Conditions: 150 mM KOAc, 10 mM MgCl2 and 150 mM bicine (pH 8.5), 24 C. An RNA of 177 nucleotides, treated with DMS and 2A3 and read out base by base.
[RMDB]
RNA sequence: GGGAACGACUCGAGUAGAGUCGAAAACUUCCAGCGUUCGCGCUGGAAGAAAGGCCGAGUAGUCUUGGGUCGCGAAAGGCCAUAAAUCAACAAUCACUCAGAAAAUCGGUAUCUUCGGAUACCGAAAGCUACUUCAGUAGUUCGCUACUGAAGUAGCAAAAGAAACAACAACAACAAC
Reactivity to DMS in 0.01 (KOAc 150mM, MgCl2 10mM, bicine 150mM(pH8.5), 24C), signal-to-noise 2, nucleotides 027 to 126: c010u000u000c000c000a000g020c000g020u010u010c200g040c020g000c000u010g020g000a000a000g010a010a060a160g030g000c010c010g020a040g010u010a100g000u020c100u000u000g030g000g000u010c100g010c030g000a110a110a210g000g010c000c010a030u000a000a020a140u010c110a040a040c160a140a050u020c090a020c030u000c010a110g000a180a020a070a070u000c010g000g010u020a000u000c000u000u020c150g010g000a020u000a010c000c000g000a020a020a040
Reactivity to 2A3 in 0.01 (KOAc 150mM, MgCl2 10mM, bicine 150mM(pH8.5), 24C), signal-to-noise 2, nucleotides 027 to 126: c000u000u010c000c010a020g010c000g020u030u050c130g010c010g010c060u000g010g010a000a000g000a010a010a000g010g010c000c000g000a010g020u010a010g010u030c060u090u120g100g000g040u120c060g010c000g030a020a010a010g010g000c000c000a000u010a000a010a010u040c030a010a110c030a020a080u170c050a010c060u090c020a020g110a100a070a030a130u030c010g000g000u000a000u020c000u030u030c180g120g010a000u000a000c000c000g000a000a000a000
Source information: Source: RMDB library M2PK50, as collected in RNAgym. 2A3 adducts were read by reverse transcription with SuperScript II with manganese.